An RNA of 177 nucleotides, treated with DMS and read out base by base.
It was measured as part of the RMDB library TTRINS.
For DMS the reverse transcriptase was MarathonRT.
The RNA was probed in 150 mM KOAc, 10 mM MgCl2 and 150 mM bicine (pH 8.5) at 24 C.
Values cover nucleotides 27 to 126.
For DMS, 4,306 sequencing reads were counted.
[RMDB]
RNA sequence: GGGAACGACUCGAGUAGAGUCGAAAAGAUAUGGAACGUUGACGGGAGCUACGUAUCAUUGUUAACACAUCGGAAACGAUGUGUUAACAAUGAUACUAUAGCGACGAUCGUUUACGUUCCUAAGUCACAAUGAUGCAAACUUCGGUUUGCAUCAUUGAAAAGAAACAACAACAACAAC
Reactivity to DMS in 0.01 (KOAc 150mM, MgCl2 10mM, bicine 150mM(pH8.5), 24C), signal-to-noise 4, nucleotides 027 to 126: g010a080u010a300u010g010g000a000a000c000g000u000u000g000a010c000g000g000g000a050g010c000u000a050c300g010u000a010u000c000a030u000u000g000u000u000a000a010c000a010c000a010u000c000g010g000a180a070a170c010g010a010u000g020u000g010u000u000a000a000c000a000a010u000g010a000u000a000c010u000a110u000a000g010c000g010a030c300g000a030u020c000g000u000u000u000a000c000g010u000u000c010c000u010a030a080g010u000c040a260